[RMDB]
RNA sequence: GGGAACGACUCGAGUAGAGUCGAAAACUUACCUCUAUAAUUUCCAACAUUACACGUCCGUUCCUCCGGAACGGUUAGCCUGGAUCAAUGGCAAGCGGUGUUGGGAUCAGACGAACCCUCCACCGCCAUUACGUCAACUAUUCGUAGUUGACGUAAUAAAAGAAACAACAACAACAAC
Reactivity to DMS in 0.01 (KOAc 150mM, MgCl2 10mM, bicine 150mM(pH8.5), 24C), signal-to-noise 9, nucleotides 027 to 126: c090u010u000a090c040c020u000c050u000a070u010a070a090u000u000u010c050c050a110a140c160a080u010u010a070c090a100c150g000u000c010c000g010u000u000c000c020u010c240c210g010g010a020a020c020g000g000u000u000a050g000c020c010u010g000g020a090u010c160a080a080u010g010g010c080a150a110g000c010g010g010u000g010u000u000g000g010g010a070u000c030a130g010a140c240g010a030a110c000c000c000u000c070c000a010c010c000g010c010c090
Reactivity to 2A3 in 0.01 (KOAc 150mM, MgCl2 10mM, bicine 150mM(pH8.5), 24C), signal-to-noise 9, nucleotides 027 to 126: c010u070u100a090c020c030u050c070u100a130u060a260a210u070u090u040c030c020a050a030c020a140u100u180a110c110a040c140g080u020c010c000g010u000u000c010c020u100c070c120g000g000a010a000c010g010g020u010u070a010g010c010c010u040g080g050a140u140c070a060a090u120g050g000c030a050a010g000c010g000g020u000g010u010u000g010g020g000a010u030c020a050g300a300c160g020a040a040c010c000c000u000c000c000a000c000c000g000c000c010
Notes: The data come from the RNA Mapping Database (RMDB), library OK2TST. An RNA of 177 nucleotides, treated with DMS and 2A3 and read out base by base. The reactions ran in a buffer of 150 mM KOAc, 10 mM MgCl2 and 150 mM bicine (pH 8.5), at 24 C. The DMS profile rests on 17,258 reads. For 2A3, 18,607 sequencing reads were counted.